[RMDB]
Record summary:
This 177-nucleotide RNA was probed chemically with DMS and 2A3. For DMS, 15,419 sequencing reads were counted. As a SHAPE reagent, 2A3 marks flexible, mostly unpaired nucleotides at the ribose 2'-OH. Conditions: 150 mM KOAc, 10 mM MgCl2 and 150 mM bicine (pH 8.5), 24 C.
RNA sequence: GGGAACGACUCGAGUAGAGUCGAAAAUGUAUCCUACAAGUCUAGUACAACGUAUAAACUGACUGUAGGUGACAUCUUCGUACUUACCUCUCACUCUGUGGCUACCUUGACGGCGCCCACAAUUGUGCAUAAGAUACCAGUUCGCUGGUAUCUUAUGAAAAGAAACAACAACAACAAC
Reactivity to DMS in 0.01 (KOAc 150mM, MgCl2 10mM, bicine 150mM(pH8.5), 24C), signal-to-noise 9, nucleotides 027 to 126: u000g010u000a130u000c000c000u000a010c010a040a110g010u000c000u020a050g030u000a080c190a110a130c300g010u010a100u010a070a100a060c050u000g000a020c000u000g010u000a010g000g000u010g000a080c020a000u000c030u000u000c020g010u010a040c060u000u000a100c150c030u000c040u000c060a060c050u000c080u000g010u000g010g000c020u000a060c030c010u000u010g010a080c180g010g010c150g000c210c000c010a040c120a050a090u010u000g010u000g000
Reactivity to 2A3 in 0.01 (KOAc 150mM, MgCl2 10mM, bicine 150mM(pH8.5), 24C), signal-to-noise 9, nucleotides 027 to 126: u010g000u010a030u050c000c000u000a000c020a130a080g010u000c030u290a010g010u050a070c070a220a050c250g180u180a090u100a240a150a040c020u010g000a000c000u000g010u000a000g000g020u020g010a000c000a010u010c010u030u020c010g050u060a040c010u040u060a050c010c010u000c010u020c030a040c020u070c050u070g030u030g040g000c010u030a070c020c000u020u070g080a050c040g000g050c040g020c030c080c000a020c020a030a150u140u110g070u070g060